[RMDB]
RNA sequence: GGGAACGACUCGAGUAGAGUCGAAAACACAACAGCGAAGGGGGGACGGAGAAGGCUAUGUUGGCCGGGCGACGGUUGUCCCGGUUUAAGCGUGUAGGCUGGUUUUCCAGGCAAAUCCGGAAUUGAAACUCCCAAUGUUGUUCGCAACAUUGGGAGUAAAAGAAACAACAACAACAAC
Reactivity to DMS in 0.01 (KOAc 150mM, MgCl2 10mM, bicine 150mM(pH8.5), 24C), signal-to-noise 1, nucleotides 027 to 126: c030a080c100a050a020c140a080g020c070g010a030a040g010g020g010g000g000g000a110c040g000g010a100g000a090a130g010g010c020u000a060u010g020u020u000g010g010c010c010g000g020g020c300g010a060c090g020g000u020u020g000u000c030c000c000g040g020u000u000u010a030a070g070c010g010u000g000u020a080g000g020c010u020g010g000u000u000u000u000c020c020a170g020g010c050a050a070a130u000c070c010g000g010a050a060u000u000g000a110a090
Source: RMDB library M2PK90, as collected in RNAgym. Structure probing data (DMS) for a 177-nucleotide construct. For DMS, 921 sequencing reads were counted. The reactions ran in a buffer of 150 mM KOAc, 10 mM MgCl2 and 150 mM bicine (pH 8.5), at 24 C.